[RMDB]
The data come from the RNA Mapping Database (RMDB), library ARCHII. The record gives the reactivity of an RNA of 207 nucleotides to 2A3. For 2A3 the reverse transcriptase was SuperScript II with manganese. The 2A3 profile rests on 629 reads. Reactivities are rounded to 0.1 and cut off at 0 and 3.

RNA sequence: GGGAACGACUCGAGUAGAGUCGAAAAGGUCUCACUUUAAGUGGGCUACACUAAAUAAUCUCCGUCUGGGGUUAGUUAGAAGAGCUUAAUCAGACUAGCUGAAUGGAAGCCUGUUACCGGGCUGAUGUUUAUGCGAAAUGCUAAUACGGUGACUACGGUUGGAGCUUAUGUUCGCAUAAGCUCCAACAAAAGAAACAACAACAACAAC
Reactivity to 2A3 in 0.01 (KOAc 150mM, MgCl2 10mM, bicine 150mM(pH8.5), 24C), signal-to-noise 1, nucleotides 027 to 156: g090g040u110c060u070c040a060c050u110u180u200a230a080g020u030g000g010g020c030u070a020c080a010c010u040a030a000a050u020a000a000u040c010u010c020c000g040u010c030u030g010g000g020g000u000u000a010g000u000u010a000g020a220a010g030a100g060c020u110u160a040a040u110c000a010g000a000c000u010a000g000c000u000g020a000a000u040g000g030a050a000g000c000c010u030g000u030u000a010c010c000g000g010g020c010u020g020a010u040g020u010u010u000a120u260g000c010g030a000a040a050u300g070c090u200a000a000u000a000c020g020g000u010g020a010c040u070a060c040g040